[RMDB]
RNA sequence: GGGAACGACUCGAGUAGAGUCGAAAAGUGCCCGGCUGUUCUGUUGCGGCGCGUCUCCCCACAUAGCGCGGGAUGAAUGACACGACCCACACCACGAUGUUGAGGAAGGCCAGAAUAAUAUUGCGUAGCAUUUUAAACUGUUCGCAGUUUAAAAUGCAAAAGAAACAACAACAACAAC
Reactivity to 2A3 in 0.01 (KOAc 150mM, MgCl2 10mM, bicine 150mM(pH8.5), 24C), signal-to-noise 2, nucleotides 027 to 126: g040u030g050c020c000c000g020g020c040u070g080u180u090c050u080g090u060u060g050c130g000g000c000g000c020g020u000c030u040c020c000c070c000a010c010a040u170a010g080c070g000c000g000g040g020a040u060g100a090a110u100g030a000c000a010c080g050a100c010c000c010a020c000a030c010c030a050c090g050a060u040g030u150u080g060a060g060g030a020a010g040g000c010c010a000g020a040a010u070a060a020u110a060u100u100g030c050g020u030a020
Reactivity to DMS in 0.01 (KOAc 150mM, MgCl2 10mM, bicine 150mM(pH8.5), 24C), signal-to-noise 4, nucleotides 027 to 126: g010u010g010c020c010c030g010g020c030u000g000u000u010c100u000g000u000u010g010c120g000g010c030g030c040g000u000c040u000c030c000c020c050a100c100a110u010a080g010c110g020c070g020g020g010a100u000g010a100a100u000g010a080c050a080c080g000a130c020c010c030a070c100a070c060c030a080c100g000a080u000g010u000u000g000a100g000g010a090a100g000g010c020c030a070g010a090a080u010a050a100u000a110u000u010g000c080g020u000a170